Source: RMDB library TTRDEL, as collected in RNAgym. The record gives the reactivity of an RNA of 177 nucleotides to DMS and 2A3.
RNA sequence: GGGAACGACUCGAGUAGAGUCGAAAAGAUAUGGACGGGAAGCUUCGAAGAACUAUAGGGAAACUCGGAAACGAGGCUAUAGGGAGAAGCGCCGUCCUAAGUCAAAAGGAGGUGUUCGCACCUCCAAGUAUAGAGAUCAGUUCGCUGAUCUCUAUACAAAAGAAACAACAACAACAAC
Reactivity to DMS in 0.01 (KOAc 150mM, MgCl2 10mM, bicine 150mM(pH8.5), 24C), signal-to-noise 5, nucleotides 027 to 126: g010a010u000a040u010g000g000a020c000g010g000g010a100a100g010c000u000u000c000g010a080a160g010a160a200c000u000a010u000a020g010g010g000a160a090a230c010u010c010g000g010a010a010a030c000g020a010g020g010c010u000a000u000a000g000g000g000a030g010a010a000g010c000g000c010c000g000u000c000c010u000a000a060g000u000c010a090a080a120a130g000g000a010g020g020u000g010u000u020c210g000c010a010c000c000u000c000c000a010a040
Reactivity to 2A3 in 0.01 (KOAc 150mM, MgCl2 10mM, bicine 150mM(pH8.5), 24C), signal-to-noise 5, nucleotides 027 to 126: g010a000u020a000u030g000g000a010c010g000g020g190a300a120g020c010u000u040c020g180a300a060g000a030a010c000u000a000u010a030g080g000g130a190a300a300c020u000c000g000g000a010a000a000c000g000a000g040g000c010u000a000u010a000g010g000g010a050g000a010a000g000c010g000c000c000g000u000c000c000u000a000a000g000u000c010a000a040a080a140g000g000a010g010g000u030g040u080u180c270g050c090a000c000c000u000c000c000a000a000
The reactions ran in a buffer of 150 mM KOAc, 10 mM MgCl2 and 150 mM bicine (pH 8.5), at 24 C.
2A3 adducts were read by reverse transcription with SuperScript II with manganese.